Source: RMDB library OK2TST, as collected in RNAgym.
The record gives the reactivity of an RNA of 177 nucleotides to DMS and 2A3.
DMS adducts were read by reverse transcription with MarathonRT.
RNA sequence: GGGAACGACUCGAGUAGAGUCGAAAAGCUAUACUUGACGACGUCCACUCGCAGGACACUCUGAACAGGUGGAUGGAGCAGUGGGUGCAGAAGCUCGUGUCGGAGGGGUACAGCGAGAAGAGCGCCAAUGCAUCAGGUCAUUCGUGACCUGAUGCAUAAAAGAAACAACAACAACAAC
Reactivity to DMS in 0.01 (KOAc 150mM, MgCl2 10mM, bicine 150mM(pH8.5), 24C), signal-to-noise 2, nucleotides 027 to 126: g000c070u000a040u000a150c030u000u000g030a170c080g000a220c080g000u000c000c000a060c000u000c090g010c080a110g020g020a160c180a030c060u000c050u000g000a100a130c180a150g010g020u010g030g000a130u000g000g040a170g030c080a030g000u010g010g000g020u020g000c050a070g000a080a140g010c000u010c050g040u000g020u000c050g020g000a150g010g000g010g020u010a050c070a080g010c020g000a060g000a040a070g000a190g000c030g000c010c030a120
Reactivity to 2A3 in 0.01 (KOAc 150mM, MgCl2 10mM, bicine 150mM(pH8.5), 24C), signal-to-noise 2, nucleotides 027 to 126: g010c020u060a040u080a260c030u080u070g070a040c010g020a030c010g020u000c000c090a010c020u050c070g090c060a020g060g030a140c050a070c150u150c010u040g050a190a030c020a070g030g010u010g040g050a040u020g020g020a020g000c030a030g020u110g000g040g000u050g000c000a050g060a140a000g000c020u010c010g060u050g050u040c040g020g050a080g020g010g000g000u020a050c000a000g000c040g030a030g010a050a010g030a020g020c030g000c000c010a020